[RMDB]
RNA sequence: GGGAACGACUCGAGUAGAGUCGAAAAUUGUCCAGCAGGUCCACACUGUCUACACUACCUGCCUGUCCAGCAGGUGCACCCUAUCUACACUACCUGACUGUCCAGCAGAUCCACCCUGUCUACACUAUCCCCCAAGUAGGUUCGCCUACUUGGGGGAAAAAGAAACAACAACAACAAC
Reactivity to DMS in 0.01 (KOAc 150mM, MgCl2 10mM, bicine 150mM(pH8.5), 24C), signal-to-noise 1, nucleotides 027 to 126: u000u000g000u010c000c030a130g060c060a070g010g000u000c040c050a100c100a050c070u010g030u010c090u010a120c110a110c100u000a110c010c030u020g000c050c030u000g040u020c080c070a080g000c020a010g050g010u020g000c090a090c050c030c110u000a080u000c030u000a040c080a090c140u010a050c040c000u000g000a100c030u020g010u000c060c020a090g020c050a060g040a080u010c030c020a060c020c000c010u000g000u000c030u000a040c120a070c120u000a130

Conditions: 150 mM KOAc, 10 mM MgCl2 and 150 mM bicine (pH 8.5), 24 C. This 177-nucleotide RNA was probed chemically with DMS. DMS adducts were read by reverse transcription with MarathonRT. Source: RMDB library OK2TST, as collected in RNAgym.